RNA sequence: GGGAACGACUCGAGUAGAGUCGAAAAUCAUGGUGGUUCGCCACCAUGAACUGUCAAGUCGCUAGAAAACGAUCAAAACUAGCGACUAGACUAACGAUCGAACUGGGGGACAGUUCGCUGUCCCCAACCAUAUUGGAGCUUUCGAGCUCCAAUAUGGAAAAGAAACAACAACAACAAC
Reactivity to 2A3 in 0.01 (KOAc 150mM, MgCl2 10mM, bicine 150mM(pH8.5), 24C), signal-to-noise 3, nucleotides 027 to 126: u030c000a010u000g010g010u010g020g060u030u050c220g070c060c010a000c000c000a000u000g000a000a050c020u020g000u000c000a010a000g010u000c000g000c020u010a010g050a120a190a050a080c130g130a220u180c110a030a050a020a130c000u000a000g000c000g010a000c000u000a010g010a000c010u020a090a050c050g090a080u230c060g060a100a110c160u190g060g000g020g010g010a010c000a000g000u040u040c200g020c050u010g000u010c000c000c000c000a000a000
Reactivity to DMS in 0.01 (KOAc 150mM, MgCl2 10mM, bicine 150mM(pH8.5), 24C), signal-to-noise 3, nucleotides 027 to 126: u000c000a010u000g000g030u010g000g020u000u010c300g030c000c000a000c000c000a000u000g010a010a090c110u010g030u000c010a070a020g000u000c010g010c000u000a000g010a110a080a140a120c140g000a060u000c110a060a080a090a150c000u000a000g000c010g000a010c000u000a030g000a010c010u010a060a050c230g000a040u000c070g010a090a090c280u000g020g010g000g000g000a030c010a010g000u000u010c120g010c020u000g000u000c000c000c000c030a000a030